[RMDB]
RNA sequence: GGGAACGACUCGAGUAGAGUCGAAAAUGUCUGAUUACUGUACGUUUGUUUGUUGGGCUCAUGGCUUUGAAUUAACGUCUGCAUCAUACUUUUGCAAGAUAGGUAAGGAACAGAAGUGUUGCAUGUGAUAACCCUAGAUUCGUCUAGGGUAAAAGAAACAACAACAACAAC
Reactivity to DMS in 0.01 (KOAc 150mM, MgCl2 10mM, bicine 150mM(pH8.5), 24C), signal-to-noise 9, nucleotides 027 to 129: u060g030u030c050u030g000a100u020u010a090c120u030g040u050a070c110g010u000u020u010g000u010u010u010g000u050u000g000g000g000c070u020c090a080u020g040g000c010u010u010u020g020a100a050u040u030a000a090c070g010u020c050u020g020c110a080u000c060a050u040a040c100u000u010u010u010g000c090a070a070g020a080u040a050g000g030u030a020a030g010g010a060a160c060a030g010a000a030g030u000g000u000u000g000c030a010u040g000u040g020a090u030a110
Reactivity to 2A3 in 0.01 (KOAc 150mM, MgCl2 10mM, bicine 150mM(pH8.5), 24C), signal-to-noise 6, nucleotides 027 to 129: u120g030u040c040u020g010a020u010u140a040c020u090g030u110a020c020g020u010u030u070g060u050u030u070g070u050u090g010g000g000c010u050c090a080u120g040g000c030u090u040u100g030a050a020u080u020a100a000c040g060u000c000u030g010c010a000u020c020a060u070a180c030u080u080u100u030g130c090a110a130g020a140u080a050g060g060u080a040a040g020g020a070a010c060a070g100a150a020g040u020g000u060u000g000c060a120u030g020u010g060a010u040a110